[RMDB]
RNA sequence: GGGAACGACUCGAGUAGAGUCGAAAAGAUGGAGUGCAAGACAAUGGAUCAAUUGAGAGAUUUGCAGAAGAGUUCUUCAAUAGAUCAGAACUUCAGGCGGGUGAAUCAGUCAAAUUCGGUAAUUCCGCAAUGAUGAGUGGUUCGCCACUCAUCAUUGAAAAGAAACAACAACAACAAC
Reactivity to DMS in 0.01 (KOAc 150mM, MgCl2 10mM, bicine 150mM(pH8.5), 24C), signal-to-noise 5, nucleotides 027 to 126: g010a140u010g010g010a050g020u000g010c050a100a090g010a080c100a080a080u010g000g010a060u000c040a080a040u000u010g010a080g010a090g000a050u000u010u000g010c060a120g000a100a140g010a060g010u000u000c010u000u000c050a050a050u010a080g020a010u010c080a080g000a040a060c070u000u000c050a090g000g020c050g000g000g020u000g010a060a040u000c030a040g000u010c080a040a080a100u010u000c030g000g010u010a080a120u010u010c010c020g020
Reactivity to 2A3 in 0.01 (KOAc 150mM, MgCl2 10mM, bicine 150mM(pH8.5), 24C), signal-to-noise 3, nucleotides 027 to 126: g080a010u120g000g010a040g000u060g020c040a040a070g040a080c020a010a130u090g050g010a030u040c030a020a070u080u090g020a050g000a010g000a070u080u120u260g070c070a000g040a260a010g030a050g060u040u010c010u060u030c020a080a160u060a090g030a050u060c040a010g040a060a020c000u070u070c060a020g000g060c020g000g000g000u020g030a030a010u040c020a020g080u000c040a020a050a110u120u030c000g050g010u080a110a110u220u060c010c010g000
Record summary:
This 177-nucleotide RNA was probed chemically with DMS and 2A3. Conditions: 150 mM KOAc, 10 mM MgCl2 and 150 mM bicine (pH 8.5), 24 C.